Chemical mapping of a 207-nucleotide RNA with 2A3 and DMS. For 2A3, 3,930 sequencing reads were counted. The reactions ran in a buffer of 150 mM KOAc, 10 mM MgCl2 and 150 mM bicine (pH 8.5), at 24 C. For DMS, 3,257 sequencing reads were counted. For DMS the reverse transcriptase was MarathonRT.
RNA sequence: GGGAACGACUCGAGUAGAGUCGAAAAAGCGCGCAUACUACGGUAUGCGUGCAAUCAGAAAUCGGGAAUGAUGUUCUCCCCUGGGAUUCCAAAACCGCUGUUUCGCUGAUGACGUCUGCUUUUUUAAUCACCACCGUUUGGUUCGCCAAACGGUGAACUAUUCAAAUUACUUCGGUAAUUUGAAUAGAAAAGAAACAACAACAACAAC
Reactivity to 2A3 in 0.01 (KOAc 150mM, MgCl2 10mM, bicine 150mM(pH8.5), 24C), signal-to-noise 5, nucleotides 027 to 156: a000g010c010g000c000g010c010a000u000a000c000u030a010c160g100g010u000a000u000g000c000g010u000g000c000a000a020u060c010a010g130a040a110a040u130c050g020g010g030a040a090u090g050a070u090g070u100u040c030u040c030c020c000c010u040g020g010g060a110u120u110c040c000a040a050a070a070c040c040g000c080u060g050u040u100u070c050g000c040u050g030a050u040g030a030c030g040u020c030u040g070c060u130u070u020u010u030u190a070a090u120c060a030c110c000a000c000c000g000u000u000u000g030g010u030u030c190g010c060c000a000a000a000c000g000g000u000g000a000a000
Reactivity to DMS in 0.01 (KOAc 150mM, MgCl2 10mM, bicine 150mM(pH8.5), 24C), signal-to-noise 1, nucleotides 027 to 156: a130g010c010g030c010g050c010a000u000a000c020u000a130c260g100g030u000a000u000g000c000g050u000g020c000a020a050u010c050a080g010a040a050a130u000c070g000g000g020a100a040u000g020a080u000g000u000u000c050u000c010c020c000c060u000g020g000g000a180u000u010c020c030a080a040a110a090c080c030g040c040u000g010u010u000u000c030g050c020u030g030a100u000g030a090c070g040u000c050u000g030c010u000u000u000u000u040u010a070a120u010c020a070c110c000a010c000c010g010u000u010u010g030g000u000u020c300g000c030c010a000a000a020c000g000g010u000g010a010a050